Chemical mapping of a 177-nucleotide RNA with 2A3 and DMS. DMS adducts were read by reverse transcription with MarathonRT. High DMS reactivity at an A or C suggests that its Watson-Crick edge is free. The reactions ran in a buffer of 150 mM KOAc, 10 mM MgCl2 and 150 mM bicine (pH 8.5), at 24 C. It was measured as part of the RMDB library OK2TST. For 2A3, 957 sequencing reads were counted.
[RMDB]
RNA sequence: GGGAACGACUCGAGUAGAGUCGAAAAUGGAACCAACCACCGAAAUUCAGGCAACUGAAGACUUAACCCUGUCCGGCGAUCAUGCAGCGGCAUCUGCUGAUAGCUUAGUUGUCGAUAAUGCCAACGAGGUCCUCUUACAUUUCGAUGUAAGAGGACCAAAAGAAACAACAACAACAAC
Reactivity to 2A3 in 0.01 (KOAc 150mM, MgCl2 10mM, bicine 150mM(pH8.5), 24C), signal-to-noise 1, nucleotides 027 to 126: u060g020g030a030a030c060c010a030a020c030c030a010c000c030g110a090a050a030u220u080c030a100g010g040c020a060a040c030u190g170a200a000g000a040c010u040u080a030a060c000c030c000u030g050u070c020c000g000g000c000g010a020u020c010a020u160g000c000a000g000c020g080g000c020a100u150c030u000g000c000u000g020a010u000a040g000c010u040u140a030g020u030u080g020u030c010g040a080u100a170a070u030g040c020c050a000a030c060g040a030
Reactivity to DMS in 0.01 (KOAc 150mM, MgCl2 10mM, bicine 150mM(pH8.5), 24C), signal-to-noise 1, nucleotides 027 to 126: u000g040g020a150a110c080c150a030a150c090c040a110c020c050g000a040a080a120u000u000c030a120g000g000c100a110a060c000u010g000a060a030g000a030c050u030u000a100a040c020c060c030u000g000u000c020c190g020g010c010g010a010u000c010a010u010g000c000a040g010c020g020g010c050a030u000c010u000g010c030u000g000a000u000a060g000c000u010u000a060g030u020u000g000u000c020g010a080u010a020a040u000g040c000c000a180a180c210g000a140